[RMDB]
RNA sequence: GGGAACGACUCGAGUAGAGUCGAAAAACCCCAGAAACCAUUCCUUAUACCUUGAGUAUUGCUGAAUUCAGUUUAGCGUGCAUGCUCUUGGCUAUUCUCAUAGUGAUUGUCAAAUUUGGAGUUACUAAAAACACGACACCCUUCGGGGUGUCGUGAACAUUUAGCCAUACUUCGGUAUGGCUAAAUGAAAAGAAACAACAACAACAAC
Reactivity to DMS in 0.01 (KOAc 150mM, MgCl2 10mM, bicine 150mM(pH8.5), 24C), signal-to-noise 2, nucleotides 027 to 156: a090c020c010c000c050a180g000a150a100a090c040c000a110u000u020c010c010u000u000a260u000a020c000c000u010u000g020a070g050u000a050u010u000g000c020u000g030a070a090u010u000c150a250g020u000u000u000a070g030c060g030u000g040c130a190u000g000c000u010c010u000u000g010g040c020u010a080u000u000c020u010c030a120u020a040g020u000g000a060u000u000g030u000c030a090a070a160u000u000u000g010g000a160g020u000u000a130c070u000a000a060a130a150a160c010a000c000g030a000c030a000c000c010c010u000u030c290g040g000g020g010u000g000u000c000g000u000g000a010a080
Reactivity to 2A3 in 0.01 (KOAc 150mM, MgCl2 10mM, bicine 150mM(pH8.5), 24C), signal-to-noise 2, nucleotides 027 to 156: a010c050c030c030c010a030g150a090a090a030c020c010a100u040u140c020c010u080u110a050u040a190c000c010u020u030g000a000g020u020a040u250u110g040c010u070g080a180a150u190u300c080a130g170u060u100u110a080g010c090g000u040g030c020a000u020g000c000u010c000u010u010g020g000c010u060a060u110u070c070u050c040a080u060a060g080u080g120a070u090u120g130u120c090a160a100a160u140u130u190g070g010a040g020u090u050a030c030u090a050a000a020a040a000c000a000c000g000a000c000a030c000c010c030u000u060c150g010g020g000g020u020g010u000c000g000u000g010a000a000

Conditions: 150 mM KOAc, 10 mM MgCl2 and 150 mM bicine (pH 8.5), 24 C. The record gives the reactivity of an RNA of 207 nucleotides to DMS and 2A3. For 2A3 the reverse transcriptase was SuperScript II with manganese. For DMS, 2,602 sequencing reads were counted. 2A3 is a SHAPE reagent: it acylates the 2'-hydroxyl of flexible nucleotides of all four kinds. The 2A3 profile rests on 742 reads. For DMS the reverse transcriptase was MarathonRT. The data come from the RNA Mapping Database (RMDB), library M2RFPK.